[RMDB]
Conditions: 150 mM KOAc, 10 mM MgCl2 and 150 mM bicine (pH 8.5), 24 C. This 207-nucleotide RNA was probed chemically with 2A3 and DMS. Source: RMDB library OK3TST, as collected in RNAgym.
RNA sequence: GGGAACGACUCGAGUAGAGUCGAAAACACGCGUAAGAGCUUCCUAUGUAGAUGUUUGACCACUUUAUAGCGGCAAAAGAGUUGUAACCAUUUAUGCCACCAACGGGAAACGAAACGAUCGAGGUAGUUUUUGGAAAAACUAUUUGCUGGCGAAGCAUCGAUCUAAAGUUUUCGAACUUUAGAUCGAAAAAGAAACAACAACAACAAC
Reactivity to 2A3 in 0.01 (KOAc 150mM, MgCl2 10mM, bicine 150mM(pH8.5), 24C), signal-to-noise 3, nucleotides 027 to 156: c060a020c030g040c030g050u070a060a020g020a050g060c000u080u030c000c000u040a080u130g020u020a080g040a160u060g050u030u010u060g070a030c020c020a030c030u070u130u070a170u080a080g030c010g010g000c010a000a010a030a080g070a040g010u030u050g060u120a080a070c010c020a020u030u070u050a090u100g030c000c000a040c010c020a110a120c070g030g000g120a130a040a030c040g030a080a050a100c070g030a070u170c090g020a060g030g000u020a070g030u020u020u020u070u060g000g000a110a050a020a010a030c020u030a020u040u000u020g040c020u040g080g060c030g000a020a000g000c000a030
Reactivity to DMS in 0.01 (KOAc 150mM, MgCl2 10mM, bicine 150mM(pH8.5), 24C), signal-to-noise 2, nucleotides 027 to 156: c060a030c070g020c040g030u000a150a130g000a140g000c010u020u000c020c020u000a010u000g000u000a080g010a160u000g000u000u010u000g040a200c020c010a070c060u000u000u000a170u000a190g070c020g020g050c020a040a100a060a140g010a170g030u000u000g040u010a080a150c030c030a100u010u010u000a050u000g030c040c010a060c040c040a050a090c050g000g040g010a140a060a160c060g000a070a080a130c090g000a110u010c040g010a140g040g030u010a020g020u000u000u000u000u010g030g010a070a080a030a030a010c010u000a050u000u000u000g020c000u000g030g000c040g000a040a080g020c070a180